[RMDB]
RNA sequence: GGGAACGACUCGAGUAGAGUCGAAAAGAUAUGGACGUUGAGAGACAUGAAUACCAGCUCGGAAACGAGCUGAUUCAACAGCUCUAACGUCCUAAGUCAAACCUACUCGUGUUCGCACGAGUAGGAACUACCCUGAUUUCUUCGGAAAUCAGGGUAGAAAAGAAACAACAACAACAAC
Reactivity to DMS in 0.01 (KOAc 150mM, MgCl2 10mM, bicine 150mM(pH8.5), 24C), signal-to-noise 2, nucleotides 027 to 126: g020a010u000a160u010g010g010a020c000g020u000u000g030a040g000a030g000a070c110a140u010g000a110a050u000a100c230c010a020g000c000u020c000g000g000a070a080a080c000g000a010g010c000u010g000a000u010u000c050a050a120c260a140g010c000u000c000u000a000a010c010g020u000c000c000u000a010a070g000u000c020a160a140a230c000c000u000a000c000u010c000g030u000g020u000u000c280g040c030a010c030g000a010g010u000a000g020g000a020a080
Reactivity to 2A3 in 0.01 (KOAc 150mM, MgCl2 10mM, bicine 150mM(pH8.5), 24C), signal-to-noise 2, nucleotides 027 to 126: g030a010u010a000u060g000g000a000c020g010u010u170g300a040g000a000g000a080c100a300u300g030a010a000u110a240c100c010a000g000c000u000c020g000g020a040a030a030c020g000a020g000c020u020g000a000u000u000c020a110a160c120a180g000c000u000c000u000a020a020c020g020u010c010c000u020a020a000g000u000c020a060a000a230c010c000u010a000c000u000c000g020u030g070u080u120c300g020c150a000c000g000a010g000u010a000g010g000a000a000